[RMDB]
RNA sequence: GGGAACGACUCGAGUAGAGUCGAAAACGCGCAGAAGGCGCAGGGCUUCAUCAUCUGCACGCCGGACGUGAAGCUCGGGCCGGGCAUCGUCGCGAAGGCGAAGUCGCACGGCCUGAAGAUGAUGACAUAUGCACUAGUACUUCGGUACUAGUGCAUAAAAAGAAACAACAACAACAAC
Reactivity to DMS in 0.01 (KOAc 150mM, MgCl2 10mM, bicine 150mM(pH8.5), 24C), signal-to-noise 5, nucleotides 027 to 126: c140g020c040g020c020a170g020a130a140g020g020c000g040c020a120g010g000g010c080u010u000c010a040u000c010a040u000c000u000g010c020a060c070g000c040c120g010g020a220c110g030u000g000a040a110g000c130u000c010g000g010g010c010c010g000g000g010c000a090u000c010g010u000c010g020c070g000a200a110g020g000c000g010a010a020g020u000c090g010c000a060c010g000g000c000c000u010g000a030a050g000a040u000g000a030u000g000a080c300a140
Reactivity to 2A3 in 0.01 (KOAc 150mM, MgCl2 10mM, bicine 150mM(pH8.5), 24C), signal-to-noise 4, nucleotides 027 to 126: c030g040c000g000c020a040g060a300a060g300g000c010g000c040a050g040g070g020c020u070u000c020a020u000c000a000u010c010u050g010c030a020c060g070c070c040g210g030a150c010g020u040g070a060a020g040c020u020c000g020g000g000c010c000g010g010g000c010a030u010c000g040u000c000g000c100g170a140a030g040g010c010g000a020a010g120u110c090g000c050a000c020g000g000c010c000u000g010a010a010g010a020u040g010a020u040g000a000c030a080

Annotation:
Chemical mapping of a 177-nucleotide RNA with DMS and 2A3. Conditions: 150 mM KOAc, 10 mM MgCl2 and 150 mM bicine (pH 8.5), 24 C.